Conditions: 150 mM KOAc, 10 mM MgCl2 and 150 mM bicine (pH 8.5), 24 C. This 177-nucleotide RNA was probed chemically with 2A3 and DMS. The 2A3 profile rests on 5,614 reads. Values cover nucleotides 27 to 126. Reactivities are rounded to 0.1 and cut off at 0 and 3.
RNA sequence: GGGAACGACUCGAGUAGAGUCGAAAACUUUGCCUCGACGGGCACCUCGGCCUUUUUUGUUCACUCGGGUGAAGCCAAUCACGGCGAUCUCGGCAUGAUUGGCCUGGAAGACGUCAUUCUGGCGAUAGCUCGAUUAAAUGUUCGCAUUUAAUCGAGCAAAAGAAACAACAACAACAAC
Reactivity to 2A3 in 0.01 (KOAc 150mM, MgCl2 10mM, bicine 150mM(pH8.5), 24C), signal-to-noise 5, nucleotides 027 to 126: c000u020u080u170g000c000c010u040c060g010a010c010g000g050g050c030a020c000c010u030c030g020g030c010c010u020u040u030u010u030u060g040u140u190c120a080c160u080c030g010g010g030u020g040a090a020g010c000c020a060a100u270c100a050c220g010g010c010g020a030u010c030u020c010g010g020c010a010u010g010a030u020u030g000g000c000c010u020g040g020a050a000g300a030c010g010u000c010a070u160u070c070u110g010g010c000g040a070u150a060
Reactivity to DMS in 0.01 (KOAc 150mM, MgCl2 10mM, bicine 150mM(pH8.5), 24C), signal-to-noise 4, nucleotides 027 to 126: c060u000u010u010g010c010c010u000c090g000a010c090g010g010g010c070a090c060c020u000c250g010g000c020c010u000u000u000u000u000u010g000u000u010c090a070c150u000c050g010g000g010u000g010a140a140g000c010c040a070a080u010c120a130c220g010g020c000g010a110u000c040u000c040g020g000c030a050u000g000a020u000u000g000g010c000c020u000g010g020a060a140g000a110c030g000u000c020a120u010u010c110u010g000g010c030g020a100u000a100